[RMDB]
RNA sequence: GGGAACGACUCGAGUAGAGUCGAAAACAGGUCGUUCAGACCACUCGAUACGGAGGCGAGACGUCGCCACAGCAGACCGGACGAGCCCUUCGCUGCGAUCGGGGGCAGUCGACGUGUUGCCGAGAUAUCAUAAUGAUAUCUUCGGAUAUCAUUAUGAAAAAGAAACAACAACAACAAC
Reactivity to DMS in 0.01 (KOAc 150mM, MgCl2 10mM, bicine 150mM(pH8.5), 24C), signal-to-noise 9, nucleotides 027 to 126: c180a130g010g010u000c020g010u000u010c200a170g000a130c010c010a140c100u010c080g010a100u010a070c090g000g010a200g010g010c010g010a020g000a030c050g010u000c010g010c070c140a050c100a070g020c020a050g000a080c010c010g010g000a060c020g010a080g010c030c160c210u010u010c110g010c010u000g010c030g010a050u000c020g000g000g000g010g000c030a070g000u000c010g010a020c020g020u000g000u000u000g010c010c000g000a210g000a100u000a080
Reactivity to 2A3 in 0.01 (KOAc 150mM, MgCl2 10mM, bicine 150mM(pH8.5), 24C), signal-to-noise 9, nucleotides 027 to 126: c040a020g020g030u030c030g080u300u280c090a040g020a030c010c010a050c030u050c040g080a060u070a230c060g080g050a050g010g010c000g000a010g020a020c020g020u010c000g020c030c020a050c010a020g030c000a010g070a180c000c020g010g010a010c010g010a010g000c030c040c000u160u230c110g020c040u300g150c030g080a090u050c010g000g000g000g030g010c000a000g020u030c010g000a020c010g020u120g060u040u010g000c000c010g070a060g020a070u120a020